[RMDB]
RNA sequence: GGGAACGACUCGAGUAGAGUCGAAAAGUUUCACAGUCAAGACGCGCUGGCCCGAACGGCGACGACAGCCAUUCCCAUCGAGUCUUUCAGCCCUCUCGCUCAGAGCACGGCGCCUCCCCCACAGUUCAACCACACCUUGAUUCGUCAAGGUGUGGUUAAAAGAAACAACAACAACAAC
Reactivity to 2A3 in 0.01 (KOAc 150mM, MgCl2 10mM, bicine 150mM(pH8.5), 24C), signal-to-noise 2, nucleotides 027 to 126: g010u030u030u040c070a060c030a040g000u030c120a150a050g050a040c030g000c000g050c020u030g030g000c000c020c000g020a050a060c020g000g000c000g040a070c010g040a020c070a010g000c000c000a040u070u010c010c010c010a010u020c020g000a010g010u000c000u000u100u010c020a030g000c000c000c000u030c000u030c020g020c000u050c040a020g000a000g050c020a040c020g000g010c010g010c000c000u000c000c000c000c020c000a040c020a030g020u060u030c050
Reactivity to DMS in 0.01 (KOAc 150mM, MgCl2 10mM, bicine 150mM(pH8.5), 24C), signal-to-noise 2, nucleotides 027 to 126: g030u020u000u000c040a160c070a090g020u040c040a100a090g010a040c080g010c050g000c040u000g000g000c030c040c050g010a060a060c060g000g000c050g010a080c070g000a040c080a090g000c080c010a180u000u000c020c000c030a060u020c030g000a030g010u000c020u000u020u000c050a070g000c000c030c020u000c040u000c050g000c050u030c040a110g000a070g040c100a060c080g020g000c040g000c020c040u000c000c000c000c000c020a000c160a070g000u000u010c120
The record gives the reactivity of an RNA of 177 nucleotides to 2A3 and DMS.
For 2A3 the reverse transcriptase was SuperScript II with manganese.
The RNA was probed in 150 mM KOAc, 10 mM MgCl2 and 150 mM bicine (pH 8.5) at 24 C.
For 2A3, 1,795 sequencing reads were counted.